This 177-nucleotide RNA was probed chemically with DMS and 2A3. For 2A3 the reverse transcriptase was SuperScript II with manganese. Reactivities are given for positions 27 through 126. The RNA was probed in 150 mM KOAc, 10 mM MgCl2 and 150 mM bicine (pH 8.5) at 24 C. Values are in units of 0.01, from 0 to 300, in steps of 10. The 2A3 profile rests on 2,836 reads.
RNA sequence: GGGAACGACUCGAGUAGAGUCGAAAAAGCAACUGCCCUGAACCCAUUUCCAUGGACAUGGGCUGGGGCUGUGGGGCCCACCCACUAGCUUGCAGCCCCCAAACUGCCCUCGGGGUGCUUGUCCGUGGGUCCACAAUGUAUUCGUACAUUGUGGACCAAAAGAAACAACAACAACAAC
Reactivity to DMS in 0.01 (KOAc 150mM, MgCl2 10mM, bicine 150mM(pH8.5), 24C), signal-to-noise 2, nucleotides 027 to 126: a080g010c040a100a090c120u000g000c010c000c010u010g000a090a130c030c010c010a090u000u000u020c050c040a020u000g010g000a010c070a060u000g010g000g010c030u000g000g000g010g000c000u000g010u000g010g000g020g020c050c070c080a270c010c000c000a000c010u000a050g010c010u000u000g010c010a030g020c000c000c020c080c090a030a070a110c140u010g000c010c010c020u030c150g000g000g010g030u000g010c120u000u010g000u000c010c010g050u000g010
Reactivity to 2A3 in 0.01 (KOAc 150mM, MgCl2 10mM, bicine 150mM(pH8.5), 24C), signal-to-noise 2, nucleotides 027 to 126: a000g020c060a040a060c060u080g020c000c020c020u000g080a110a120c000c000c050a040u080u120u030c030c020a010u040g020g010a010c020a060u050g000g000g000c000u020g010g000g000g000c010u020g000u010g010g000g030g020c040c060c020a140c000c020c000a010c070u100a000g030c000u010u180g170c000a010g000c000c030c020c000c000a090a150a160c070u130g050c010c010c010u080c060g100g010g020g010u010g040c040u030u050g010u010c000c010g020u050g030